[RMDB]
RNA sequence: GGGAACGACUCGAGUAGAGUCGAAAAGAGGAAUUUGAUGUGACAAUCGGCUGUUAUCCAGACAGAAAUGCGGGUCAUAAUCGGAUUAAAGUGACAGCCACUGAUGGAGAGACACUCACGAGUGCAAUAACAUGGCUUCAAAAUCAAAUUGAUGCAAACUAGUCCAUUAAUUCGUUAAUGGACUAGUAAAAGAAACAACAACAACAAC
Reactivity to DMS in 0.01 (KOAc 150mM, MgCl2 10mM, bicine 150mM(pH8.5), 24C), signal-to-noise 3, nucleotides 027 to 156: g020a120g020g000a050a080u000u000u000g010a050u000g010u000g000a090c040a050a080u000c040g000g000c010u010g020u000u000a120u000c110c160a200g020a150c040a030g010a060a040a100u020g030c040g030g020g000u000c020a050u000a060a120u010c040g010g010a100u000u000a020a070a100g000u010g020a080c030a080g030c000c020a080c050u000g020a090u000g000g010a120g020a120g010a050c050a040c040u000c060a080c130g020a110g040u000g000c030a070a100u000a050a120c070a080u000g000g010c040u000u000c060a030a040a050a110u000c030a030a050a150u010u000g020a110u010g010c030a040a120
Reactivity to 2A3 in 0.01 (KOAc 150mM, MgCl2 10mM, bicine 150mM(pH8.5), 24C), signal-to-noise 8, nucleotides 027 to 156: g090a010g030g080a050a030u060u060u070g040a050u070g030u050g020a030c040a060a110u110c060g020g010c020u000g020u030u020a060u070c050c000a020g060a080c020a030g060a040a130a010u130g050c040g040g010g000u030c020a010u080a190a060u080c040g020g020a020u070u130a110a080a040g050u040g050a010c020a020g030c030c010a030c040u040g040a080u070g020g010a030g000a000g010a030c000a010c060u030c010a050c060g040a020g020u040g000c020a040a070u070a130a040c050a080u070g040g000c000u060u060c050a080a080a030a070u110c050a040a030a080u090u110g030a030u100g050c060a040a080
The record gives the reactivity of an RNA of 207 nucleotides to DMS and 2A3. It was measured as part of the RMDB library OK3TST. The reactions ran in a buffer of 150 mM KOAc, 10 mM MgCl2 and 150 mM bicine (pH 8.5), at 24 C. For DMS, 7,065 sequencing reads were counted. DMS adducts were read by reverse transcription with MarathonRT.